An RNA of 207 nucleotides, treated with 2A3 and read out base by base. It was measured as part of the RMDB library OK3TST.
RNA sequence: GGGAACGACUCGAGUAGAGUCGAAAACUGAAUUAGUAGAUGGUAACAUUGUCGUUCUCGAUGGGUCUGGUGCCGAGAUGGCAAAUUUGUCGAAUCGUCAGAAUGGGCGUACGAGGAUUUAUUAUUUGACAUAUAAUGGAACCGUGUUCACUCCUGGGCCCUCAUAGUCGUUCGCGACUAUGAGGGCAAAAGAAACAACAACAACAAC
Reactivity to 2A3 in 0.01 (KOAc 150mM, MgCl2 10mM, bicine 150mM(pH8.5), 24C), signal-to-noise 1, nucleotides 027 to 156: c130u070g000a000a040u100u070a120g080u030a000g050a210u130g070g000u060a000a020c010a130u000u110g020u040c000g010u010u000c010u000c000g040a090u040g000g050g000u020c030u080g000g060u110g020c030c000g100a050g000a080u060g000g000c010a050a020a140u150u110u050g110u000c040g060a050a030u010c030g040u030c040a040g040a150a200u130g020g080g000c070g020u030a010c020g000a020g000g000a060u000u090u000a070u020u020a010u030u050u120g030a010c030a010u100a000u050a160a000u060g020g040a030a000c010c010g020u020g000u130u040c020a040c030u080c020c020u080g020g080

The RNA was probed in 150 mM KOAc, 10 mM MgCl2 and 150 mM bicine (pH 8.5) at 24 C. The 2A3 profile rests on 522 reads.